[RMDB]
RNA sequence: GGGAACGACUCGAGUAGAGUCGAAAAGUGAGUGGAAACCCGCUUUAUUCACUGGGGUCGACAACUCUGGGGUGAAAAGGGAGGAUCGGAUGGGAAGAGUAUAUCCUAUGGGAAUCCCUGGGUGCCUAGGUAAAUCAUAGUUCGCUAUGAUUUACCUAAAAGAAACAACAACAACAAC
Reactivity to DMS in 0.01 (KOAc 150mM, MgCl2 10mM, bicine 150mM(pH8.5), 24C), signal-to-noise 3, nucleotides 027 to 126: g020u000g030a010g000u010g010g010a090a150a050c020c020c020g010c060u000u010u000a080u000u000c070a140c050u000g000g000g010g020u000c030g010a100c120a050a070c050u000c040u020g040g010g000g020u000g010a010a050a120a050g000g000g010a050g010g010a170u010c060g000g010a100u010g000g000g020a000a110g000a140g020u010a100u010a060u000c030c010u000a100u010g000g000g020a280a140u010c020c010c000u000g000g000g030u000g000c050c060u000
Chemical mapping of a 177-nucleotide RNA with DMS.
Source: RMDB library VIROID, as collected in RNAgym.
The reactions ran in a buffer of 150 mM KOAc, 10 mM MgCl2 and 150 mM bicine (pH 8.5), at 24 C.